[RMDB]
RNA sequence: GGGAACGACUCGAGUAGAGUCGAAAAACGUUGAUAUGGAUUUACUCCGAGGAGACGAACUACCACGAACAGGGGAAACUCUACCCGUGUCGUCUCCGUUUGACGAGUAAGUCCUAAGUCAACAUGCCACGGAAGUAGUUCGCUACUUCCAAAAGAAACAACAACAACAAC
Reactivity to 2A3 in 0.01 (KOAc 150mM, MgCl2 10mM, bicine 150mM(pH8.5), 24C), signal-to-noise 9, nucleotides 027 to 129: a010c070g000u000u000g000a000u000a000u030g000g000a000u000u010u010a000c000u000c000c010g010a040g000g000a000g030a000c010g010a040a040c140u220a080c130c020a000c010g020a050a020c030a080g000g000g000g000a000a000a000c000u000c000u010a030c010c010c000g000u000g010u010c000g000u000c000u000c000c000g010u140u080u080g010a000c000g000a000g000u000a000a000g000u000c000c000u000a000a000g000u000c000a000a000c000a010u090g060c000c010a090c050
Reactivity to DMS in 0.01 (KOAc 150mM, MgCl2 10mM, bicine 150mM(pH8.5), 24C), signal-to-noise 8, nucleotides 027 to 129: a070c150g020u000u020g020a030u020a060u060g000g010a010u000u000u030a000c020u020c010c020g000a050g000g030a040g030a000c030g030a080a070c110u110a130c250c030a040c000g040a040a090c100a120g020g010g010g010a000a020a020c000u020c000u000a090c100c140c010g030u020g020u070c000g020u000c020u000c020c010g030u090u060u080g000a090c300g030a020g030u030a000a000g020u010c020c000u020a000a000g000u020c010a000a000c020a050u050g000c000c050a090c160

Structure probing data (2A3 and DMS) for a 170-nucleotide construct. The DMS profile rests on 54,689 reads. For 2A3 the reverse transcriptase was SuperScript II with manganese. DMS adducts were read by reverse transcription with MarathonRT. Conditions: 150 mM KOAc, 10 mM MgCl2 and 150 mM bicine (pH 8.5), 24 C. For 2A3, 204,352 sequencing reads were counted. Source: RMDB library 15KLIB, as collected in RNAgym.